[RMDB]
RNA sequence: GGGAACGACUCGAGUAGAGUCGAAAACUACAUGCUUUACAUUGAACCCUCACAAUAACCCAAUGAGGUGGGUACUAUUAUGAUCUUCGUUUUUCAUAUGAGGAAACUAGGCAUAUGGAUGUUGAGUAAUUUGCCCACGGUCGCUCAGCUAGCAAUAGCAGCGUAAUAUCUUCGGAUAUUACGCUGCAAAAGAAACAACAACAACAAC
Reactivity to 2A3 in 0.01 (KOAc 150mM, MgCl2 10mM, bicine 150mM(pH8.5), 24C), signal-to-noise 1, nucleotides 027 to 156: c050u020a020c010a070u060g030c040u190u060u090a080c100a020u110u090g010a040a050c020c020c020u000c020a100c060a020a210u130a090a090c040c070c050a130a160u150g080a090g110g130u010g000g020g000u020a060c100u060a010u080u010a020u080g180a100u000c000u020u020c060g060u070u000u000u020u060c030a020u070a020u100g060a090g090g250a080a050a060c090u080a080g050g000c010a020u020a050u110g000g030a020u010g000u000u020g000a010g000u010a010a020u040u060u000g000c020c000c000a040c000g060g000u030c030g000c030u060c000a030g000c050u150a020g020c010a000a110u000a210